Structure probing data (2A3) for a 177-nucleotide construct. 2A3 adducts were read by reverse transcription with SuperScript II with manganese. The RNA was probed in 150 mM KOAc, 10 mM MgCl2 and 150 mM bicine (pH 8.5) at 24 C. For 2A3, 765 sequencing reads were counted. Values cover nucleotides 27 to 126.
RNA sequence: GGGAACGACUCGAGUAGAGUCGAAAAGAAAGACCGAUUUACAUUAUCGGAUCAGGAUAGGGUAGGGCAGGGCCAUUUCGGUAUAACCAUUCUGUCCCCUGUCCUGUCCCGAUAGUGAGAAUCGGAAAGAGCUGCAAACUUUCGAGUUUGCAGCUCUAAAAGAAACAACAACAACAAC
Reactivity to 2A3 in 0.01 (KOAc 150mM, MgCl2 10mM, bicine 150mM(pH8.5), 24C), signal-to-noise 1, nucleotides 027 to 126: g060a000a060a010g050a060c000c020g010a010u000u010u060a090c000a010u010u010a000u000c000g010g030a000u030c030a000g000g020a010u000a010g000g060g120u040a060g100g000g000c020a040g000g000g060c020c000a120u160u230u160c070g070g000u080a150u050a220a060c060c040a020u110u000c000u000g000u010c000c000c000c000u000g030u000c000c000u020g000u000c000c000c000g000a000u000a000g000u000g000a100g000a060a000u010c010g000g000a060a030